[RMDB]
RNA sequence: GGGAACGACUCGAGUAGAGUCGAAAAAUCUGGUGCUGAAUGCGUUGAAAAUUGGAAGACUGGAUUCCAACAUUAAUCAUGCUUGUCCGGUAAUAAGACCAAGCUAGCAGAUCUAAAUUAGGGAAAAGAUGGUAUGUGGAUUCGUCCACAUACCAUCAAAAGAAACAACAACAACAAC
Reactivity to 2A3 in 0.01 (KOAc 150mM, MgCl2 10mM, bicine 150mM(pH8.5), 24C), signal-to-noise 2, nucleotides 027 to 126: a020u010c010u070g040g100u070g140c020u070g110a200a030u130g000c050g060u100u100g040a060a080a080a090u050u080g070g030a000a040g000a060c140u110g090g030a020u040u000c010c000a000a010c000a020u100u100a040a030u020c040a020u030g000c000u030u060g040u020c020c050g140g030u110a130a180u130a170a020g020a010c000c050a000a000g010c030u020a010g060c000a000g010a020u040c050u140a040a160a260u090u150a090g000g060g100a010a030a050a100
Reactivity to DMS in 0.01 (KOAc 150mM, MgCl2 10mM, bicine 150mM(pH8.5), 24C), signal-to-noise 2, nucleotides 027 to 126: a070u010c050u010g000g000u000g030c030u010g010a120a090u010g010c070g020u000u000g000a050a030a090a150u000u000g000g040a070a040g010a190c120u000g000g000a130u000u000c030c030a000a080c160a040u010u010a060a070u010c100a050u000g000c000u000u010g010u010c040c160g000g000u000a050a050u000a140a100g010a060c070c040a070a070g000c020u000a060g000c030a040g000a020u010c030u020a050a070a070u000u010a110g000g010g000a040a060a080a110